Chemical mapping of a 207-nucleotide RNA with 2A3 and DMS. It was measured as part of the RMDB library OK3TST. The RNA was probed in 150 mM KOAc, 10 mM MgCl2 and 150 mM bicine (pH 8.5) at 24 C. High DMS reactivity at an A or C suggests that its Watson-Crick edge is free.

RNA sequence: GGGAACGACUCGAGUAGAGUCGAAAAUGGUUGACAAUUUAGGAAAUGGAUAUGACAACCCUAAUUCAUUUUGGGAAGAUGCUAAAACUAAGAAACGGACAUAUAGUGCAAUGACGAUAAAAGUCCUACCAUGUACAGUGAGAAAUAAAAAUAUAGAACUACAUCUCGUUUUCGAACGAGAUGUAGUAAAAGAAACAACAACAACAAC
Reactivity to 2A3 in 0.01 (KOAc 150mM, MgCl2 10mM, bicine 150mM(pH8.5), 24C), signal-to-noise 3, nucleotides 027 to 156: u030g020g020u080u070g000a020c030a050a070u050u060u150a170g060g010a040a070a040u080g000g020a020u060a020u140g050a020c040a050a100c030c000c010u090a080a030u090u080c080a040u020u050u070u130g050g000g010a040a010g030a010u010g000c030u060a080a040a020a060c020u040a030a020g040a120a060a000c090g000g050a010c040a010u190a010u050a070g050u030g010c000a020a050u030g030a040c000g000a000u030a070a080a010a000g010u000c000c030u010a060c020c020a020u060g010u120a050c010a080g060u060g080a050g080a060a060a010u190a060a030a040a050a000u250a010u110a100g040a060
Reactivity to DMS in 0.01 (KOAc 150mM, MgCl2 10mM, bicine 150mM(pH8.5), 24C), signal-to-noise 2, nucleotides 027 to 156: u010g030g020u000u000g020a090c050a010a100u010u000u000a180g020g020a030a030a030u000g020g000a020u000a100u010g000a050c030a070a140c020c000c020u000a050a080u000u010c070a080u010u000u000u000g020g020g010a040a050g040a060u000g010c040u010a070a050a060a140c080u050a100a110g020a040a140a120c070g040g000a050c050a110u010a140u000a050g030u000g010c010a030a070u000g020a050c050g000a060u000a060a040a040a120g010u000c040c020u000a060c040c050a100u000g010u000a030c070a110g010u000g000a060g000a070a040a120u020a030a070a030a090a140u000a160u010a160g010a100